[RMDB]
RNA sequence: GGGAACGACUCGAGUAGAGUCGAAAAGGAAAGAUAACUUUGCAUAAUCACCAAGAUGGUUUACCAACAUACACCACGUAUACUGAGUAUUACAGUCUUCACCAACAUGAGUCAAAUGCUAGCGUGUAUAGGGUUGGUAGUAUAAACCUACCUGGUACGACAUGUAGUACUUCGGUACUACAUGUCGAAAAGAAACAACAACAACAAC
Reactivity to 2A3 in 0.01 (KOAc 150mM, MgCl2 10mM, bicine 150mM(pH8.5), 24C), signal-to-noise 4, nucleotides 027 to 156: g070g030a120a050a040g050a060u160a230a080c050u090u100u160g010c060a070u080a160a040u200c020a030c030c030a010a010g040a100u080g010g000u020u020u030a050c030c070a030a030c030a040u130a020c060a020c010c030a060c050g040u060a070u030a160c060u060g030a010g060u050a030u050u080a070c080a060g010u010c020u060u120c040a040c020c040a120a080c020a150u170g010a010g040u080c040a070a000a000u020g000c020u020a030g030c020g060u010g010u010a000u030a070g140g010g000u040u000g030g010u010a040g000u050a040u050a090a040a000c000c000u020a030c000c010u020g020g000u000a030
Reactivity to DMS in 0.01 (KOAc 150mM, MgCl2 10mM, bicine 150mM(pH8.5), 24C), signal-to-noise 2, nucleotides 027 to 156: g030g010a130a100a120g020a180u020a060a120c080u000u000u000g030c100a060u000a080a110u000c100a070c090c010a100a090g040a250u010g010g030u010u000u000a100c060c080a030a060c050a040u000a080c070a060c020c030a030c010g020u000a080u000a050c090u000g040a090g010u000a040u000u010a100c140a110g010u010c070u000u000c050a090c070c050a070a030c050a060u050g000a040g010u000c150a130a000a070u000g010c010u000a140g010c070g010u000g000u000a050u000a030g040g040g010u010u000g020g070u000a010g020u000a180u000a020a030a040c030c000u000a270c000c000u000g030g030u000a200
The record gives the reactivity of an RNA of 207 nucleotides to 2A3 and DMS.
2A3 adducts were read by reverse transcription with SuperScript II with manganese.